[RMDB]
RNA sequence: GGGAACGACUCGAGUAGAGUCGAAAAUUCUGGGUUCGCCCAGAAAUGUAGCGUACUACAUGUGGUGUAGGUAGAAGUUUAUCCCAAAUAGGAUAGUCAGCUUCUAUAAUCUACACGUAACAUCAUGUAUCGCCGGCGCACCUGGUUCGCCAGGUAAACCACUGCAGCGUUUCGACGCUGCAGUGGUAAAAGAAACAACAACAACAAC
Reactivity to 2A3 in 0.01 (KOAc 150mM, MgCl2 10mM, bicine 150mM(pH8.5), 24C), signal-to-noise 1, nucleotides 027 to 156: u080u060c000u000g000g000g030u060u080c300g100c030c000c000a030g060a040a020a000u230g040u100a040g000c030g010u000a150c030u000a000c060a030u010g010u000g000g000u000g040u020a000g000g000u000a000g000a000a000g000u000u120u020a040u020c060c080c000a220a060a130u190a090g000g000a000u010a020g250u300c110a030g010c000u000u000c000u000a030u020a030a130u040c000u000a000c000a000c000g090u060a000a060c000a120u120c000a000u040g020u000a030u300c030g030c020c050g060g000c020g030c000a000c040c000u000g030g050u140u070c120g000c090c010a000g000g000u060a110a080
An RNA of 207 nucleotides, treated with 2A3 and read out base by base. 2A3 adducts were read by reverse transcription with SuperScript II with manganese. The data come from the RNA Mapping Database (RMDB), library RNAMAK.